[RMDB]
RNA sequence: GGGAACGACUCGAGUAGAGUCGAAAAAAUUGAUGCAAGGUGUGGAGCGACCUUAAACAGUUCUGGUGGUGCUCUGAAUGGAGUGCUCUACUAAGAUUAUAAAAUAGAAGGUAAGCUAUUAUCUCUUAAAACGCAAUAGAGUUCGCUCUAUUGCGAACAUUGUGUAAAAGUUCGCUUUUACACAAUGAAAAGAAACAACAACAACAAC
Reactivity to DMS in 0.01 (KOAc 150mM, MgCl2 10mM, bicine 150mM(pH8.5), 24C), signal-to-noise 2, nucleotides 027 to 156: a050a090u000u010g020a100u000g020c030a130a070g020g030u010g000u000g020g020a080g030c040g020a050c010c000u010u000a090a100a150c080a040g010u000u000c060u000g000g000u000g000g050u000g030c020u010c040u040g010a160a090u000g020g010a030g030u000g020c010u000c030u010a060c020u000a070a060g010a130u020u010a140u000a060a080a060a130u010a090g010a080a050g000g010u010a070a090g010c020u000a040u000u000a040u000c000u000c010u000u010a000a050a080a180c000g000c010a010a010u000a050g010a060g000u000u000c300g040c030u000c010u010a030u000u000g020c010g010a020a020
Reactivity to 2A3 in 0.01 (KOAc 150mM, MgCl2 10mM, bicine 150mM(pH8.5), 24C), signal-to-noise 6, nucleotides 027 to 156: a000a010u210u200g030a040u100g020c030a030a020g020g000u030g020u050g040g010a010g010c020g010a020c000c000u080u080a100a080a020c040a080g010u050u020c010u030g020g010u020g000g010u010g000c000u000c010u090g190a120a100u290g020g000a010g000u030g020c030u030c020u040a030c000u020a020a070g010a050u120u150a070u180a150a110a070a020u090a020g050a040a010g090g010u060a050a040g020c020u000a020u120u030a040u090c060u000c010u040u060a060a130a060a020c010g000c000a000a000u000a000g000a000g000u040u100c120g030c020u000c000u000a010u000u000g000c000g000a010a000